[RMDB]
RNA sequence: GGGAACGACUCGAGUAGAGUCGAAAAUUGCCCAGGCUGGUCUGGAACACUUGGGCUCAAGCAAUCCACUUGCCUUGGCCUCCCAAAGUCCUGGGAUUAUAGGCAUGAGCCACCACACCCAACUGAAAAGGACAUUUCUGAUGGAGAAGAGCCUCUACCUCCACCUCUAUUUCGAUAGAGGUGGAGGAAAAGAAACAACAACAACAAC
Reactivity to 2A3 in 0.01 (KOAc 150mM, MgCl2 10mM, bicine 150mM(pH8.5), 24C), signal-to-noise 1, nucleotides 027 to 156: u140u090g000c000c000c000a030g000g000c010u110g010g000u060c060u030g070g040a130a020c060a020c140u070u100g080g100g000c110u110c040a050a030g020c010a010a040u020c050c040a070c070u020u010g030c010c010u010u020g010g010c000c010u040c000c010c000a040a020a000g010u030c010c010u020g000g000g020a010u170u140a140u200a090g010g000c000a030u170g030a000g010c000c000a010c000c010a020c000a010c000c000c000a010a070c110u160g020a000a080a050a050g000g000a010c010a090u120u140u010c080u110g090a100u100g030g010a080g000a150a090g000a010g060c010c020u050c050u080a160